Notes
Source: RMDB library M2RFPK, as collected in RNAgym. Structure probing data (DMS and 2A3) for a 207-nucleotide construct. The reactions ran in a buffer of 150 mM KOAc, 10 mM MgCl2 and 150 mM bicine (pH 8.5), at 24 C. For 2A3 the reverse transcriptase was SuperScript II with manganese. For 2A3, 1,338 sequencing reads were counted. For DMS the reverse transcriptase was MarathonRT.

RNA sequence: GGGAACGACUCGAGUAGAGUCGAAAACAGAGCUAAUGAGCCACAUACCUACCCAAGGUGAAAGCUCCUUCUCUCACAAUGUGUAACUCAUGAUUCUCAUGACCCCUGGUUGGAGAGAUCCGGACUAUAGACUAGAGGGUGUUCGCACCCUCUAGAACUAGUUUACGUGGUUCGCCACGUAAACUAGAAAAGAAACAACAACAACAAC
Reactivity to DMS in 0.01 (KOAc 150mM, MgCl2 10mM, bicine 150mM(pH8.5), 24C), signal-to-noise 2, nucleotides 027 to 156: c060a080g000a110g020c030u000a130a150u000g000a070g070c040c030a040c060a170u000a050c020c030u000a180c020c020c040a130a110g020g030u000g000a120a140a070g000c030u000c020c030u000u020c010u010c000u000c010a110c050a060a040u000g020u000g000u000a020a020c080u010c000a050u000g010a170u000u000c060u000c000a060u020g000a070c030c020c030c010u000g020g030u020u000g010g020a090g000a100g000a040u000c040c080g000g010a120c050u000a100u010a130g000a230c000u000a010g000a040g030g000g030u000g020u000u020c300g020c020a020c000c000c000u010c010u000a010g000a050a190
Reactivity to 2A3 in 0.01 (KOAc 150mM, MgCl2 10mM, bicine 150mM(pH8.5), 24C), signal-to-noise 3, nucleotides 027 to 156: c050a040g030a020g020c050u120a160a060u090g050a060g070c060c010a030c010a070u280a030c020c000u030a050c010c010c050a040a020g020g010u050g020a080a050a050g030c040u000c000c020u060u040c020u000c000u010c010a080c030a130a090u120g080u030g040u120a090a050c010u000c000a000u030g020a150u300u140c090u040c100a040u050g030a060c030c000c000c040u040g090g000u050u050g020g000a020g000a000g010a040u020c040c030g000g010a020c040u090a060u080a260g120a050c000u000a000g000a000g000g020g010u000g000u040u040c100g040c040a000c000c000c020u010c000u000a000g000a000a010